[RMDB]
RNA sequence: GGGAACGACUCGAGUAGAGUCGAAAACCGUGACAUUGCGAAAGCAAGGCUGGCGGUAGGUAGUCCUGGGCGGCGACAGCCUUGGACUGCGGCGUAAAGGUGUGCCUGGGGCCGUUAAACCUAUCGUGAAAGGCAACUUGGUUCGCCAAGUUGCCAACUUCUGUAGAUUGUUCGCAAUCUACAGAAGAAAAGAAACAACAACAACAAC
Reactivity to DMS in 0.01 (KOAc 150mM, MgCl2 10mM, bicine 150mM(pH8.5), 24C), signal-to-noise 2, nucleotides 027 to 156: c010c020g050u000g010a100c060a080u000u060g010c000g020a150a080a260g020c010a040a050g030g020c020u000g030g040c010g000g030u010a000g040g040u000a040g010u000c020c010u000g020g010g020c000g020g000c060g000a160c220a150g020c000c000u010u000g000g000a040c010u000g010c020g010g050c020g070u000a110a260a070g010g040u000g010u000g020c010c010u010g000g010g040g030c020c000g020u000u010a060a110a080c000c010u000a040u000c020g000u000g000a060a080a110g020g020c020a030a020c010u000u000g010g010u000u000c300g000c030c000a000a070g000u000u020g030c000c010a000a010
Reactivity to 2A3 in 0.01 (KOAc 150mM, MgCl2 10mM, bicine 150mM(pH8.5), 24C), signal-to-noise 3, nucleotides 027 to 156: c010c010g060u090g050a060c120a170u020u050g000c000g040a130a040a020g010c010a010a030g070g060c120u060g070g000c010g000g000u000a000g010g010u000a000g000u000c000c010u020g000g000g000c020g010g070c150g080a080c120a070g000c010c000u000u000g000g000a000c000u000g000c000g000g000c010g030u090a060a060a020g060g010u170g070u140g290c000c010u020g010g000g130g000c010c000g000u030u080a090a120a020c010c000u000a000u010c000g010u020g070a110a060a010g000g000c000a000a000c000u000u010g000g020u040u020c100g010c090c000a000a000g000u000u000g000c000c000a000a000